[RMDB]
RNA sequence: GGGAACGACUCGAGUAGAGUCGAAAACACGGUCUAUGGCACUGGUAGAAUUCACUGAUCGUAGACACCAGUGAUUCUUCAGUCAGCCAUACACCGUGAAAGAGCUGAUUUCUUCGGAAAUCAGCUCCAUCUGUCACCUCUUCGGAGGUGACAGAUGAAAAGAAACAACAACAACAAC
Reactivity to 2A3 in 0.01 (KOAc 150mM, MgCl2 10mM, bicine 150mM(pH8.5), 24C), signal-to-noise 1, nucleotides 027 to 126: c000a020c010g020g010u000c010u010a010u020g020g030c030a010c020u010g000g110u120a010g010a040a030u230u160c000a010c000u020g040a070u110c100g130u140a070g120a160c070a030c050c020a000g010u010g000a000u020u000c000u010u000c020a060g000u010c050a010g010c010c000a010u000a000c000a000c000c000g000u000g000a010a020a000g000a000g000c000u000g000a010u000u020u030c020u020u080c210g090g010a000a010a010u000c000a000g000c000u030c000
Reactivity to DMS in 0.01 (KOAc 150mM, MgCl2 10mM, bicine 150mM(pH8.5), 24C), signal-to-noise 1, nucleotides 027 to 126: c020a000c000g010g010u000c270u000a000u000g010g020c000a060c000u000g040g010u000a000g000a030a020u010u010c010a010c000u000g000a020u010c080g030u010a130g000a140c240a050c040c010a030g000u000g020a070u020u000c020u000u000c000a010g000u000c240a160g010c000c000a000u000a000c160a010c000c000g030u000g000a020a060a110g000a000g010c000u000g000a010u000u000u000c000u000u000c190g000g020a010a000a000u000c000a000g000c000u000c000